Structure probing data (DMS and 2A3) for a 177-nucleotide construct. For DMS, 2,175 sequencing reads were counted. The RNA was probed in 150 mM KOAc, 10 mM MgCl2 and 150 mM bicine (pH 8.5) at 24 C.
RNA sequence: GGGAACGACUCGAGUAGAGUCGAAAAGAGGUCUUGCCUCCUUGAGAUCGAGGAGGUAGAGGUGGAGGUCCUUGUCCUCGACGAUGAAUCCGAGGUCCUGGGAGGAGAGUGAAAGGCCGAAACAGAGUCUUUCCCUAAACUUCGGUUUAGGGAAAGAAAAAGAAACAACAACAACAAC
Reactivity to DMS in 0.01 (KOAc 150mM, MgCl2 10mM, bicine 150mM(pH8.5), 24C), signal-to-noise 3, nucleotides 027 to 126: g000a220g020g010u000c000u000u000g000c010c000u000c000c010u000u000g000a150g010a000u010c000g000a300g000g000a020g000g030u030a040g000a080g020g040u010g000g010a070g010g000u010c180c180u010u020g000u000c000c010u000c020g010a040c020g010a130u000g010a220a140u000c010c010g000a280g000g010u000c000c010u000g000g010g010a040g010g000a120g010a110g050u000g010a100a020a040g010g000c010c000g000a120a050a080c100a130g010a180g000
Reactivity to 2A3 in 0.01 (KOAc 150mM, MgCl2 10mM, bicine 150mM(pH8.5), 24C), signal-to-noise 2, nucleotides 027 to 126: g080a030g000g020u020c010u060u040g020c000c030u060c020c000u270u090g220a280g010a160u050c030g000a030g030g030a020g000g010u080a000g030a040g100g050u080g040g010a020g000g050u070c110c130u130u190g040u050c000c000u000c010g040a010c020g080a040u150g100a050a020u000c010c000g000a000g020g010u020c030c020u020g000g020g010a010g050g000a050g000a000g060u170g060a120a010a040g010g000c020c020g000a020a030a050c050a010g100a020g070

Description: The 2A3 profile rests on 1,436 reads.